This 177-nucleotide RNA was probed chemically with 2A3.
Conditions: 150 mM KOAc, 10 mM MgCl2 and 150 mM bicine (pH 8.5), 24 C.

[RMDB]
RNA sequence: GGGAACGACUCGAGUAGAGUCGAAAAGGCAGAGUUAACGGAUGCUGCACUGGCUGCCGAUCUCGCCACGGCAGCGGGGGAGUUACUCCUCGAAAUUCGCGAGGAGAUCGGUUUCGACCAACCGCGGCGUCCGCGCAUGAUUCGUCAUGCGCGGACGAAAAGAAACAACAACAACAAC
Reactivity to 2A3 in 0.01 (KOAc 150mM, MgCl2 10mM, bicine 150mM(pH8.5), 24C), signal-to-noise 1, nucleotides 027 to 126: g000g000c000a000g050a000g120u100u180a260a100c000g000g000a000u100g000c000u000g010c020a040c020u140g130g000c000u000g000c000c060g000a000u000c000u000c020g000c010c010a000c000g100g000c020a020g040c070g000g010g000g000g000a100g000u050u000a210c000u000c000c060u000c000g000a000a000a300u300u180c200g000c000g000a010g010g000a000g000a000u050c000g010g000u020u180u100c270g050a140c000c000a070a020c000c030g030c000g010g000